This 177-nucleotide RNA was probed chemically with DMS.
The reactions ran in a buffer of 150 mM KOAc, 10 mM MgCl2 and 150 mM bicine (pH 8.5), at 24 C.
Reactivities are given for positions 27 through 126.

RNA sequence: GGGAACGACUCGAGUAGAGUCGAAAAGAUAUGGAGCGAUCGAUCAGUGUCUAUGAAGUACAAUCUAGUCGGAUCGGAAACGAUCCGACUAGAUUGUAUGGAGACGUGAUCGAGUCGCUCCUAAGUCCAGCUAGAAGAAGUUCGCUUCUUCUAGCUGAAAAGAAACAACAACAACAAC
Reactivity to DMS in 0.01 (KOAc 150mM, MgCl2 10mM, bicine 150mM(pH8.5), 24C), signal-to-noise 2, nucleotides 027 to 126: g000a090u000a300u010g000g010a020g020c000g000a100u000c010g010a020u000c010a090g020u010g020u010c010u000a300u000g010a100a200g000u020a010c010a020a000u000c000u010a000g010u010c000g000g000a030u000c010g010g010a130a090a190c000g000a010u000c000c000g000a010c000u000a000g000a010u000u000g000u000a000u000g000g000a010g020a000c010g030u000g000a020u000c000g000a010g020u000c000g000c000u000c000c000u000a010a080g010u000c050